[RMDB]
RNA sequence: GGGAACGACUCGAGUAGAGUCGAAAAGCGAUGCGGGAUGAACCGAACGCAAAGUUAAAGUGCCAAAAUGCUCGCUCACCUAGAUACCAUAAAAGGUGUUGGUUCAUUUAGACAGCAGGACGGUGGCAUCAAUCAGGCCAUUCGUGGCCUGAUUGAUAAAAGAAACAACAACAACAAC
Reactivity to 2A3 in 0.01 (KOAc 150mM, MgCl2 10mM, bicine 150mM(pH8.5), 24C), signal-to-noise 3, nucleotides 027 to 126: g010c010g020a030u120g020c000g000g030g090a080u080g060a060a060c020c000g020a000a000c000g010c000a080a000a000g010u080u120a130a050a010g160u100g010c030c010a050a160a070a070u180g000c030u050c030g020c010u010c010a040c020c000u020a050g050a130u160a200c050c000a070u170a230a140a000a000g000g010u040g020u030u030g020g000u000u000c000a010u010u000u010a110g050a060c020a040g000c000a020g050g030a010c010g050g000u030g010g000c000
Reactivity to DMS in 0.01 (KOAc 150mM, MgCl2 10mM, bicine 150mM(pH8.5), 24C), signal-to-noise 3, nucleotides 027 to 126: g000c000g030a180u000g020c010g000g070g020a240u030g010a160a080c030c040g010a070a110c040g030c060a010a080a150g010u000u010a060a120a100g000u020g010c060c020a080a020a120a070u020g000c030u000c090g000c040u010c040a040c000c000u000a100g020a080u030a100c170c090a070u000a100a070a090a050g000g000u000g000u000u020g000g000u000u000c020a040u000u050u050a060g020a130c140a070g000c010a040g000g010a150c080g020g030u020g000g030c090

Source information:
An RNA of 177 nucleotides, treated with 2A3 and DMS and read out base by base. Reactivities are given for positions 27 through 126.